[RMDB]
RNA sequence: GGGAACGACUCGAGUAGAGUCGAAAAGAAGAAGCUGCAGAUCGUAUAGAGCAUUUGGUGCUAAGGCAACGAUGCUGCCACAGUCAUGCUAUUAAAUAGCACGCGAUUUGCCUAUCGUCGCAUAACAGCGUGAGCGUAGUUUCGACUACGCUCACGCAAAAGAAACAACAACAACAAC
Reactivity to 2A3 in 0.01 (KOAc 150mM, MgCl2 10mM, bicine 150mM(pH8.5), 24C), signal-to-noise 1, nucleotides 027 to 126: g110a100a000g090a040a010g050c050u020g030c010a000g000a000u020c000g000u100a010u060a110g040a020g010c010a020u030u080u210g060g040u020g000c020u020a000a190g090g000c000a070a000c060g000a060u080g030c080u090g050c010c010a040c020a080g050u120c000a050u000g010c000u030a000u100u210a280a030a060u050a020g020c000a020c000g020c030g060a020u010u020u060g000c000c020u070a140u080c020g060u000c010g030c180a010u050a210a170c080a080
Reactivity to DMS in 0.01 (KOAc 150mM, MgCl2 10mM, bicine 150mM(pH8.5), 24C), signal-to-noise 1, nucleotides 027 to 126: g000a160a130g050a070a140g000c130u010g000c000a010g010a020u000c010g030u030a060u000a030g020a150g000c050a000u000u000u000g000g020u000g000c060u000a060a300g050g080c050a040a030c090g010a040u000g000c080u000g030c110c090a030c210a130g010u000c150a080u020g020c000u000a010u000u000a050a020a280u000a000g000c010a060c060g000c000g000a020u000u000u020g020c000c040u000a130u000c080g000u000c030g010c080a060u000a170a090c090a170